[RMDB]
Chemical mapping of a 207-nucleotide RNA with 2A3.
The data come from the RNA Mapping Database (RMDB), library OK3TST.

RNA sequence: GGGAACGACUCGAGUAGAGUCGAAAAGGGUGUUGCCCAAGGUCACAGAGCUAAAGAAAAUGGCUGGACUGCCAAUGAAACCAUGCUCUUUCUACGACAACAUGUUACCCAAGGAACUGCACAAACACAAAAGUGUUCACUUCUGUCCAAGCCACCAGUACCAUCGCAUAUUCGUAUGCGAUGGUACAAAAGAAACAACAACAACAAC
Reactivity to 2A3 in 0.01 (KOAc 150mM, MgCl2 10mM, bicine 150mM(pH8.5), 24C), signal-to-noise 2, nucleotides 027 to 156: g020g000g020u050g030u080u110g030c040c020c030a030a030g040g030u080c060a010c040a130g010a010g010c090u150a210a090a010g110a050a100a120a030u050g010g000c020u040g030g060a090c070u070g000c020c010a010a040u120g050a070a020a000c040c000a060u080g000c010u000c000u000u120u060c060u090a050c060g090a030c020a070a010c020a040u020g020u080u100a100c000c010c000a030a010g050g000a050a040c040u070g010c080a040c010a110a110a050c080a030c030a160a120a060a070g050u030g050u080u110c050a090c070u080u020c010u030g020u000c020c020a020a020g030c010c000a060c060c030a040
The reactions ran in a buffer of 150 mM KOAc, 10 mM MgCl2 and 150 mM bicine (pH 8.5), at 24 C.